[RMDB]
RNA sequence: GGGAACGACUCGAGUAGAGUCGAAAAGGAGCUCGGCAUGCUCUAAAUCCUAGGAAGAGCAUGCGUACGCUCUUCCUUACCACCAGAGCGUAUUGAUGUGUUGGUGGUGUUGUGACACAUCAGUGAGGGCACAACAGGAUAUUGCUCUUACCGAGCACGUGACCUCAUUGUUCGCAAUGAGGUUGCGAAAAGAAACAACAACAACAAC
Reactivity to DMS in 0.01 (KOAc 150mM, MgCl2 10mM, bicine 150mM(pH8.5), 24C), signal-to-noise 4, nucleotides 027 to 156: g000g010a170g020c010u000c010g000g000c050a060u000g010c000u000c000u000a060a060a090u000c020c010u010a140g000g000a060a030g020a020g030c010a070u010g040c170g030u010a030c100g040c010u000c000u000u000c000c010u000u000a090c050c030a090c060c030a070g000a040g020c020g020u000a110u000u010g020a080u000g030u010g010u000u000g010g010u000g010g010u000g000u000u000g040u000g000a110c050a060c060a030u000c070a100g000u000g020a090g000g010g020c020a050c060a070a210c040a120g020g010a170u000a100u000u000g000c000u000c020u000u000a060c060c020g000a040g020c020a140
Reactivity to 2A3 in 0.01 (KOAc 150mM, MgCl2 10mM, bicine 150mM(pH8.5), 24C), signal-to-noise 5, nucleotides 027 to 156: g090g010a060g000c010u010c020g010g000c030a020u040g000c000u000c000u030a090a080a040u060c020c020u030a040g040g040a040a000g000a010g000c010a030u140g050c030g050u020a020c050g000c000u000c000u010u020c000c000u010u040a020c010c020a020c010c020a010g000a000g010c010g010u030a030u030u060g040a030u020g010u000g000u020u010g010g030u030g010g020u010g010u000u000g000u000g020a010c010a000c000a020u060c010a010g020u030g080a050g020g030g010c010a010c020a090a080c020a040g060g000a040u060a070u090u050g000c000u000c000u000u030a060c020c010g000a000g000c010a010